[RMDB]
RNA sequence: GGGAACGACUCGAGUAGAGUCGAAAAAAGAUAUGGACGAUACCGAGGACGUCUCACCCGAAGAACUUUCUCGGAAACGAGAAAGGGAGGGUGAGAUAGUCCCUAGACAGUAUCGUCCUAAGUCAAACACGUGUUCUCUGUUCGCAGAGAACACGUGAAAAGAAACAACAACAACAAC
Reactivity to DMS in 0.01 (KOAc 150mM, MgCl2 10mM, bicine 150mM(pH8.5), 24C), signal-to-noise 1, nucleotides 027 to 126: a100a080g000a020u000a300u040g000g000a000c000g040a040u000a020c030c020g010a080g000g000a020c000g010u000c000u000c000a000c010c010c000g020a180a080g050a130a190c020u000u000u000c000u010c020g000g000a120a060a220c000g010a030g000a000a000a010g000g000g020a070g010g010g020u000g000a000g000a000u000a000g010u000c000c000c300u000a020g000a070c300a090g000u020a000u000c000g030u030c000c000u010a000a090g000u000c040a040a020a190
Structure probing data (DMS) for a 177-nucleotide construct. The reactions ran in a buffer of 150 mM KOAc, 10 mM MgCl2 and 150 mM bicine (pH 8.5), at 24 C. For DMS the reverse transcriptase was MarathonRT. Source: RMDB library TTRDES, as collected in RNAgym.